[RMDB]
RNA sequence: GGGAACGACUCGAGUAGAGUCGAAAAGAAAGUUCAAGCAAGCUAGCCGGCAAAAAAGCAAACUUGACCACCAAGGAUAAAAGAGAUCUUAUCCAGGGAUGCAAAAGAUAAUCUCACUUUUGACACCAAAACAGGGAGUAGUUCGCUACUCCCUGAAUCACAUUCUGUUCUUCGGAACAGAAUGUGAAAAAGAAACAACAACAACAAC
Reactivity to 2A3 in 0.01 (KOAc 150mM, MgCl2 10mM, bicine 150mM(pH8.5), 24C), signal-to-noise 2, nucleotides 027 to 156: g040a010a050a010g020u020u040c040a030a000g040c020a060a010g020c020u060a020g010c020c050g080g050c140a090a020a100a030a000a000g010c050a060a040a050c020u040u030g050a060c000c010a020c000c020a080a100g000g000a010u010a070a060a030a000g130a020g000a020u030c010u010u030a010u020c010c010a030g000g020g020a030u060g020c020a000a000a020a000g020a030u100a090a170u060c030u020c040a020c020u030u010u030u080g060a100c020a030c090c050a010a020a070a160c020a000g020g000g000a000g000u000a000g010u040u060c140g010c080u010a000c000u010c010c000c000u000g000a000a000
Reactivity to DMS in 0.01 (KOAc 150mM, MgCl2 10mM, bicine 150mM(pH8.5), 24C), signal-to-noise 1, nucleotides 027 to 156: g010a050a100a070g000u020u000c000a060a080g040c000a050a300g010c060u020a300g060c000c040g030g050c020a010a000a110a110a100a060g020c030a060a110a050c010u000u000g000a100c080c020a150c060c030a110a190g000g000a030u000a010a040a040a100g020a180g020a080u000c010u000u000a020u000c010c020a220g010g020g020a090u000g000c050a000a030a020a020g000a090u000a050a080u000c050u000c030a190c030u000u000u000u010g020a160c030a050c020c020a050a050a090a190c000a030g020g010g020a010g030u010a010g030u000u020c190g020c010u000a030c000u010c020c000c000u010g000a000a080
Conditions: 150 mM KOAc, 10 mM MgCl2 and 150 mM bicine (pH 8.5), 24 C.
The record gives the reactivity of an RNA of 207 nucleotides to 2A3 and DMS.
It was measured as part of the RMDB library M2RFPK.
For DMS the reverse transcriptase was MarathonRT.
2A3 adducts were read by reverse transcription with SuperScript II with manganese.